[RMDB]
RNA sequence: GGGAACGACUCGAGUAGAGUCGAAAACGACUCAAUACGUCCCCGUCGUACAGAAUGGUAACAUAUCUCUCCAAUUAUCUGAGCUUGGGUAUACGGGGAAACCCAACCCCUUGGGAAGAUUGGGUAUAAAAGGAGCGAUCCUUCGGGAUCGCUCCAAGAAUAACCGAUUGUUCGCAAUCGGUUAUUCAAAAGAAACAACAACAACAAC
Reactivity to 2A3 in 0.01 (KOAc 150mM, MgCl2 10mM, bicine 150mM(pH8.5), 24C), signal-to-noise 1, nucleotides 027 to 156: c040g010a000c010u020c050a000a160u120a080c020g030u040c000c000c000c010g050u060c010g020u070a090c040a040g090a100a090u140g000g110u300a230a080c090a090u230a160u120c020u020c020u000c020c010a120a110u120u080a090u230c080u070g020a020g090c040u050u040g010g020g000u010a020u000a070c020g000g000g020g000a000a030a000c000c000c040a000a050c020c040c000c020u020u090g100g020g000a090a030g040a020u010u040g020g000g040u080a080u090a190a120a070a150g030g000a000g000c000g030a020u000c000c010u060u070c200g000g030g040a000u020c000g020c040u030c000c000a000a000
Chemical mapping of a 207-nucleotide RNA with 2A3. 2A3 is a SHAPE reagent: it acylates the 2'-hydroxyl of flexible nucleotides of all four kinds. It was measured as part of the RMDB library M2RFPK. The RNA was probed in 150 mM KOAc, 10 mM MgCl2 and 150 mM bicine (pH 8.5) at 24 C.